About this RNA
The record gives the reactivity of an RNA of 207 nucleotides to DMS and 2A3. The 2A3 profile rests on 1,995 reads. 2A3 adducts were read by reverse transcription with SuperScript II with manganese.

RNA sequence: GGGAACGACUCGAGUAGAGUCGAAAAGGGUGAUGUCUCCUAACCUUUAUCAAUGGGGGCACUCGGUCGUGCUGUGGGUAGAAAUAUUAUUUCGUGCCUACCUUAGACGCUUGUCGUCGGGAGUAUGUGGGACUGAUGAACUUCGGUUCAUCAGUAAGGCUUGAUUUAAGUUCGCUUAAAUCAAGCCAAAAGAAACAACAACAACAAC
Reactivity to DMS in 0.01 (KOAc 150mM, MgCl2 10mM, bicine 150mM(pH8.5), 24C), signal-to-noise 2, nucleotides 027 to 156: g010g010g010u010g010a040u000g010u000c020u010c020c030u000a110a090c090c050u000u010u000a110u010c090a070a050u000g010g040g010g000g040c020a060c020u000c040g010g020u020c060g030u000g000c020u010g030u000g020g010g010u000a200g010a040a060a070u000a120u000u000a130u000u000u010c020g020u000g030c010c010u010a060c010c090u010u020a100g020a070c020g000c040u010u000g020u000c030g020u000c000g020g010g000a190g050u020a060u000g010u010g000g030g020a060c010u020g010a010u010g000a010a000c020u000u010c300g050g000u000u010c000a010u000c010a020g000u010a050a080
Reactivity to 2A3 in 0.01 (KOAc 150mM, MgCl2 10mM, bicine 150mM(pH8.5), 24C), signal-to-noise 4, nucleotides 027 to 156: g050g000g010u120g020a090u020g020u010c010u040c000c000u040a110a130c010c020u100u270u140a160u130c080a090a110u170g000g010g020g000g000c000a010c000u010c010g040g000u020c020g020u030g040c060u040g010u050g010g000g000u010a030g110a060a070a020u210a170u300u130a070u090u090u020c040g010u070g030c000c000u000a030c010c000u060u070a060g000a020c000g020c070u180u300g140u300c000g000u010c000g000g070g000a060g030u090a060u210g040u140g020g030g010a020c010u000g000a000u000g000a000a000c010u010u030c150g060g000u000u000c000a000u000c000a000g000u000a000a030
Source: RMDB library M2RFPK, as collected in RNAgym. The RNA was probed in 150 mM KOAc, 10 mM MgCl2 and 150 mM bicine (pH 8.5) at 24 C.